[RMDB]
RNA sequence: GGGAACGACUCGAGUAGAGUCGAAAAGAUAUGGAUAGGAUAAACGUAACUAUGCAUAUGAACUACAGCGGCAUCGGAAACGAUGCUCGCUGCAUAUGCAUAGUUACGUUAGUUCCUAUCCUAAGUCGCUUUAGGAUAGCUUCGGCUAUCCUAAAGCAAAAGAAACAACAACAACAAC
Reactivity to DMS in 0.01 (KOAc 150mM, MgCl2 10mM, bicine 150mM(pH8.5), 24C), signal-to-noise 2, nucleotides 027 to 126: g000a130u040a300u000g020g000a010u010a000g000g020a010u000a070a080a000c000g030u000a000a010c000u000a000u000g010c000a010u010a000u000g020a050a070c120u000a300c000a000g000c000g000g010c000a000u000c000g010g000a110a080a200c020g030a000u000g000c010u000c000g070c000u000g000c000a000u010a000u000g000c000a010u000a000g010u000u000a000c010g000u000u000a030g000u000u000c000c000u010a000u010c000c000u000a020a120g010u000c110